Structure probing data (DMS and 2A3) for a 177-nucleotide construct. The RNA was probed in 150 mM KOAc, 10 mM MgCl2 and 150 mM bicine (pH 8.5) at 24 C. Values cover nucleotides 27 to 126. DMS adducts were read by reverse transcription with MarathonRT. For 2A3, 9,148 sequencing reads were counted. Values are in units of 0.01, from 0 to 300, in steps of 10.

RNA sequence: GGGAACGACUCGAGUAGAGUCGAAAAGUCAAGCUGCGCAUUGCCUGGUCAAGCUUCGUGCGCGACUUCGGUCCGAUCAACCACACCACGGUCUCGAUCACCGAGGACCCGGAGACCGGUGAGACACCGGGCGUAGGGACUUCGGUCCCUACGCCCGAAAAGAAACAACAACAACAAC
Reactivity to DMS in 0.01 (KOAc 150mM, MgCl2 10mM, bicine 150mM(pH8.5), 24C), signal-to-noise 3, nucleotides 027 to 126: g010u000c140a070a110g010c100u020g020c040g000c050a040u020u070g010c040c030u000g000g010u020c050a080a150g000c060u010u000c120g050u010g000c030g030c130g000a110c010u000u040c050g000g020u000c080c040g000a050u010c080a140a130c030c020a150c080a190c160c230a110c110g000g010u000c070u030c000g030a060u000c120a100c060c080g020a050g000g000a190c010c010c000g000g010a030g020a010c000c000g010g000u000g000a210g000a090c050a110c160
Reactivity to 2A3 in 0.01 (KOAc 150mM, MgCl2 10mM, bicine 150mM(pH8.5), 24C), signal-to-noise 7, nucleotides 027 to 126: g060u050c040a030a020g020c040u090g010c050g010c060a050u090u180g050c020c030u110g050g040u090c050a070a030g020c020u110u100c090g090u080g020c050g010c030g030a040c000u030u030c020g010g020u040c060c090g000a030u030c020a020a020c010c010a050c030a050c060c050a080c120g000g020u030c040u080c150g070a080u030c010a020c050c010g000a050g020g050a070c000c000c030g020g000a050g000a050c000c020g000g010u020g010a050g010a010c040a020c030